[RMDB]
RNA sequence: GGGAACGACUCGAGUAGAGUCGAAAAGAUAUGGAGCGUAGCGCUCAACAGCCUGACGUCGGAAACGACGUCCAGGACAUGAGCGUCUACGCUCCUAAGUCAAAACGCGUCACUUCGGUGACGCGAACGGAGCACUAUUGUUCGCAAUAGUGCUCCGAAAAGAAACAACAACAACAAC
Reactivity to DMS in 0.01 (KOAc 150mM, MgCl2 10mM, bicine 150mM(pH8.5), 24C), signal-to-noise 1, nucleotides 027 to 126: g000a010u000a300u010g000g010a020g000c000g000u000a000g000c010g000c020u000c010a030a110c270a130g010c010c000u010g000a000c000g020u010c030g000g030a200a120a210c000g010a010c010g000u000c070c030a010g000g010a010c180a290u000g000a010g000c000g000u020c000u000a000c000g010c000u000c000c000u000a010a080g010u020c030a120a060a110a130c010g000c000g000u000c000a010c000u000u010c140g030g010u010g010a010c010g010c000g000a000a030

Background:
Chemical mapping of a 177-nucleotide RNA with DMS. The RNA was probed in 150 mM KOAc, 10 mM MgCl2 and 150 mM bicine (pH 8.5) at 24 C. The DMS profile rests on 966 reads.